RNA sequence: GGGAACGACUCGAGUAGAGUCGAAAAGAAGAUAGCAGCGGAGACCCCGGUCCGAAUGCCCGUCGGCAGCAAACUCCUCUGGAGUCCUUCGGAUCCAAAGGAGAAAACUACCGGCGGAGGGUGAUCCAUAGCCCAAUGUUCGCAUUGGGCAAAAGAAACAACAACAACAAC
Reactivity to DMS in 0.01 (KOAc 150mM, MgCl2 10mM, bicine 150mM(pH8.5), 24C), signal-to-noise 4, nucleotides 027 to 129: g000a070a020g030a060u000a000g020c070a040g040c060g010g000a060g000a130c030c040c030c060g010g000u000c010c070g000a120a040u070g020c070c000c020g010u000c000g000g000c010a000g000c050a050a090a240c000u020c000c020u010c050u030g000g000a000g070u000c040c030u010u050c240g080g030a110u070c020c000a000a000a000g000g000a010g020a020a050a120a100c000u020a000c010c010g000g000c020g070g000a040g000g020g030u050g000a100u050c000c000a100u080a220
Reactivity to 2A3 in 0.01 (KOAc 150mM, MgCl2 10mM, bicine 150mM(pH8.5), 24C), signal-to-noise 5, nucleotides 027 to 129: g060a020a000g030a040u160a040g000c040a000g010c030g030g030a030g020a110c020c020c000c010g010g010u030c010c010g060a140a100u130g060c000c000c000g020u000c000g000g010c000a000g000c020a040a060a040c010u000c000c000u040c010u000g020g000a030g130u090c020c000u190u160c140g010g000a000u010c020c000a000a000a030g010g000a010g000a060a070a000a000c010u010a010c000c000g000g000c000g000g000a010g010g010g000u070g030a070u050c030c010a050u130a050